[RMDB]
RNA sequence: GGGAACGACUCGAGUAGAGUCGAAAAGUGUUUAUGGUGUAAGAUGAGUCAGUCAGCACUUGCCAAAUCAUAGCUCUUUCAUUAGUGGCUAGGGACAUUUGCAAACUAUAGGAAAUGUUGCUCACGGUCCGCUGAUCAAAAAGAUAAGCAUUUAAAGCAGAUCGGUUCAUUUCGAUGAACCGAUCUGAAAAGAAACAACAACAACAAC
Reactivity to DMS in 0.01 (KOAc 150mM, MgCl2 10mM, bicine 150mM(pH8.5), 24C), signal-to-noise 1, nucleotides 027 to 156: g030u000g000u000u010u010a020u020g030g020u000g040u030a110a100g030a090u020g040a120g010u000c060a180g050u020c000a120g020c100a070c000u000u060g040c030c000a020a080a080u000c020a140u000a020g090c050u020c070u000u020u000c130a060u000u000a090g030u010g050g020c040u000a090g020g030g020a060c000a070u000u000u030g040c030a060a080a220c100u010a100u040a130g030g000a020a180a150u000g000u000u000g010c030u010c040a080c060g020g010u000c070c020g040c040u000g130a060u000c050a010a020a050a110a170g000a020u000a000a000g010c020a010u010u010u000a050a080a160g000
Reactivity to 2A3 in 0.01 (KOAc 150mM, MgCl2 10mM, bicine 150mM(pH8.5), 24C), signal-to-noise 2, nucleotides 027 to 156: g030u000g040u030u050u050a000u040g030g000u010g070u050a060a070g030a190u080g000a000g070u160c030a010g040u040c030a000g030c000a020c010u070u030g030c040c040a010a130a070u090c080a080u060a020g030c020u010c000u020u050u010c030a070u000u080a000g040u000g050g000c020u020a070g020g000g020a000c020a020u030u050u050g030c040a100a040a040c030u050a070u160a090g010g050a000a070a050u080g040u070u110g050c020u030c030a060c030g000g000u020c010c000g000c020u040g010a060u050c040a000a170a030a010a000g040a010u060a040a060g040c010a000u060u000u220a060a090a000g050
Annotation:
Conditions: 150 mM KOAc, 10 mM MgCl2 and 150 mM bicine (pH 8.5), 24 C. This 207-nucleotide RNA was probed chemically with DMS and 2A3. DMS adducts were read by reverse transcription with MarathonRT. Source: RMDB library OK3TST, as collected in RNAgym.